[RMDB]
Annotation: This 177-nucleotide RNA was probed chemically with DMS. For DMS the reverse transcriptase was MarathonRT. The data come from the RNA Mapping Database (RMDB), library M2PK50. The DMS profile rests on 2,319 reads. The reactions ran in a buffer of 150 mM KOAc, 10 mM MgCl2 and 150 mM bicine (pH 8.5), at 24 C.
RNA sequence: GGGAACGACUCGAGUAGAGUCGAAAACACCCGCAAUUCGUUGCGGGUGAGAGCACCACUCCUGCGGGAGAUAAGGCCAUACGGACAGCCGGGUGCAAAGCCAUAGCAGGUCCUUCGGGACCUGCAAUAAGUUCUGAAAUUUCGAUUUCAGAACUUAAAAAGAAACAACAACAACAAC
Reactivity to DMS in 0.01 (KOAc 150mM, MgCl2 10mM, bicine 150mM(pH8.5), 24C), signal-to-noise 2, nucleotides 027 to 126: c000a010c000c000c000g030c010a020a030u000u010c150g010u000u010g020c000g000g000g020u010g010a030g010a080g000c000a020c010c020a300c010u000c000c000u000g030c130g060g000g000a020g010a090u000a060a080g000g010c000c020a060u010a060c240g000g000a050c080a120g000c010c010g000g020g020u000g000c010a070a060a150g000c010c010a060u010a110g020c000a020g000g000u000c000c000u010u020c110g050g030g000a010c000c000u000g000c010a020a040